[RMDB]
RNA sequence: GGGAACGACUCGAGUAGAGUCGAAAAACGCGAGGAUUCGUCCUCGCGUACAUAAGUGAGUUCGCCGGAUUGCUGCCUAAGUGAGUUCGCCGGAUAGCUGCCAAGCACAUAGUUUCGACUAUGUGAAACGUCAGGGAUAUUUCGAUAUCCCUGACGUAAAAGAAACAACAACAACAAC
Reactivity to 2A3 in 0.01 (KOAc 150mM, MgCl2 10mM, bicine 150mM(pH8.5), 24C), signal-to-noise 2, nucleotides 027 to 126: a000c000g000c010g000a000g000g010a030u020u030c130g090u020c020c000u020c000g000c000g000u020a010c000a080u150a020a060g080u030g120a070g060u020u060c040g020c020c030g020g020a080u060u070g020c030u030g040c030c100u100a080a060g020u030g110a030g000u040u000c030g000c030c010g000g000a030u050a030g030c040u080g000c000c010a070a040g130c000a010c010a010u000a000g010u030u080u080c180g080a020c000u000a000u000g030u040g020a130a090
Reactivity to DMS in 0.01 (KOAc 150mM, MgCl2 10mM, bicine 150mM(pH8.5), 24C), signal-to-noise 2, nucleotides 027 to 126: a040c000g010c010g010a010g000g000a050u000u010c230g020u000c000c010u000c000g000c000g020u010a000c090a060u010a050a050g020u000g010a110g000u000u000c010g010c110c030g000g000a050u000u000g040c030u000g010c060c080u000a090a050g010u010g000a080g030u000u000c030g020c140c030g000g030a070u000a180g010c030u000g010c020c050a090a150g000c010a000c000a010u000a000g010u000u000u000c190g000a020c000u010a000u000g010u010g000a040a050